Source: RMDB libraries RFM100 and RFMREP, as collected in RNAgym. This 177-nucleotide RNA was probed chemically with DMS and 2A3. The reactions ran in a buffer of 150 mM KOAc, 10 mM MgCl2 and 150 mM bicine (pH 8.5), at 24 C.
RNA sequence: GGGAACGACUCGAGUAGAGUCGAAAACUUUGCAACGGCACUUGUAACGAAAAAGUAAAUCGAGGCUGCUAAAACACAGGGCUGCACAGCAUCCUUGCACCUGCGUAGCCGAUAGGUACGGGUGACCCAAUAUCCACCUGUUCGCAGGUGGAUAUUGAAAAGAAACAACAACAACAAC
Reactivity to DMS in 0.01 (KOAc 150mM, MgCl2 10mM, bicine 150mM(pH8.5), 24C), signal-to-noise 9, nucleotides 027 to 126: c030u000u020u020g010c160a080a100c160g010g020c010a010c030u010u000g020u010a050a070c060g020a080a050a050a120a090g010u020a050a070a070u010c110g010a110g000g010c000u000g020c040u020a070a060a100a100c210a120c050a030g000g000g000c080u000g010c020a080c190a100g000c030a060u000c020c020u000u010g010c080a060c110c050u000g010c150g010u000a020g010c020c010g000a060u010a050g000g010u000a030c030g000g000g030u000g010a110c030c020
Reactivity to 2A3 in 0.01 (KOAc 150mM, MgCl2 10mM, bicine 150mM(pH8.5), 24C), signal-to-noise 9, nucleotides 027 to 126: c020u060u080u180g040c040a080a060c040g020g000c020a010c030u020u040g030u070a080a030c040g090a080a030a030a040a050g130u150a040a060a090u140c080g020a030g030g000c010u010g000c020u110a080a030a120a010c090a010c020a020g020g030g030c060u050g010c040a040c040a220g040c010a060u060c010c020u030u060g010c030a050c030c020u060g030c040g040u030a010g010c000c000g040a060u070a050g050g010u010a010c010g040g000g000u030g070a170c000c000